The data come from the RNA Mapping Database (RMDB), library OK1LIB. This 177-nucleotide RNA was probed chemically with DMS and 2A3.
RNA sequence: GGGAACGACUCGAGUAGAGUCGAAAAGUACCGAGGUACGCCUCGGUACAAUAAAAUCAGCGGUUAAAAAGCAGGCGUUAUAACCGCUGAACGCCUGCUUAAAGAUGCUCCUUACGAGGAGCAUCAAAUUUACCAUCCCUUUCGAGGGAUGGUAAAUAAAAGAAACAACAACAACAAC
Reactivity to DMS in 0.01 (KOAc 150mM, MgCl2 10mM, bicine 150mM(pH8.5), 24C), signal-to-noise 3, nucleotides 027 to 126: g020u000a010c020c000g010a000g000g000u000a130c230g020c000c000u010c000g040g000u020a000c010a050a100u040a090a090a100a070u010c080a070g000c080g010g000u030u050a040a050a060a090a020g030c010a020g010g000c010g030u000u000a110u020a100a070c040c080g000c060u020g010a000a000c030g000c000c000u010g010c040u000u000a060a060a070g000a010u010g000c000u010c020c010u000u000a140c160g010a070g000g000a020g020c000a010u000c000a000a020
Reactivity to 2A3 in 0.01 (KOAc 150mM, MgCl2 10mM, bicine 150mM(pH8.5), 24C), signal-to-noise 4, nucleotides 027 to 126: g000u010a000c000c000g000a010g000g020u070a020c180g110c010c000u010c000g000g000u000a000c000a000a000u010a000a030a000a040u130c060a010g050c040g090g090u140u220a180a090a040a010a000g010c010a020g030g000c010g010u010u090a080u060a220a080c030c010g020c050u060g010a010a020c000g000c000c000u010g000c010u040u040a080a020a040g000a000u000g000c010u050c000c000u060u030a070c300g120a020g000g010a010g000c000a000u000c010a000a000

The 2A3 profile rests on 3,476 reads.
DMS adducts were read by reverse transcription with MarathonRT.
The RNA was probed in 150 mM KOAc, 10 mM MgCl2 and 150 mM bicine (pH 8.5) at 24 C.